[RMDB]
RNA sequence: GGGAACGACUCGAGUAGAGUCGAAAAGCUAGGGAGCGCACGAUGAGACUGCCGUGACGUCUAGCCUGCGUCUCAACUAGUCUGAGUCAAUGAAAACGCUGGGGGUGAUGUACGAGACUAGUACACAGUGUAAGCUGUUCUUCGGAGCAGUUUACACAAAAGAAACAACAACAACAAC
Reactivity to 2A3 in 0.01 (KOAc 150mM, MgCl2 10mM, bicine 150mM(pH8.5), 24C), signal-to-noise 9, nucleotides 027 to 126: g020c020u030a010g010g010g020a060g020c020g000c010a010c030g040a040u100g020a020g030a040c040u060g040c030c020g040u030g020a080c010g020u060c020u020a020g030c000c010u020g020c010g070u010c000u000c010a020a070c020u030a010g040u020c020u030g050a020g050u030c040a030a100u160g140a110a090a050a040c090g010c050u050g000g000g000g000g020u050g020a080u060g020u040a010c020g000a010g020a040c020u010a010g030u050a020c060a000c010a020
Reactivity to DMS in 0.01 (KOAc 150mM, MgCl2 10mM, bicine 150mM(pH8.5), 24C), signal-to-noise 9, nucleotides 027 to 126: g010c020u000a030g000g010g010a080g010c060g000c030a030c120g010a080u020g010a090g010a050c050u010g020c060c060g020u000g010a080c070g010u000c020u010a090g000c030c060u010g000c050g000u010c010u000c020a080a080c040u000a020g010u010c020u010g000a120g010u010c050a090a100u040g010a080a060a070a100c090g010c030u000g000g000g000g000g010u010g000a070u010g000u020a050c050g000a100g000a060c060u000a060g010u000a060c130a070c150a100

The data come from the RNA Mapping Database (RMDB), library OK1LIB. Chemical mapping of a 177-nucleotide RNA with 2A3 and DMS. For 2A3, 118,283 sequencing reads were counted. The RNA was probed in 150 mM KOAc, 10 mM MgCl2 and 150 mM bicine (pH 8.5) at 24 C. DMS adducts were read by reverse transcription with MarathonRT.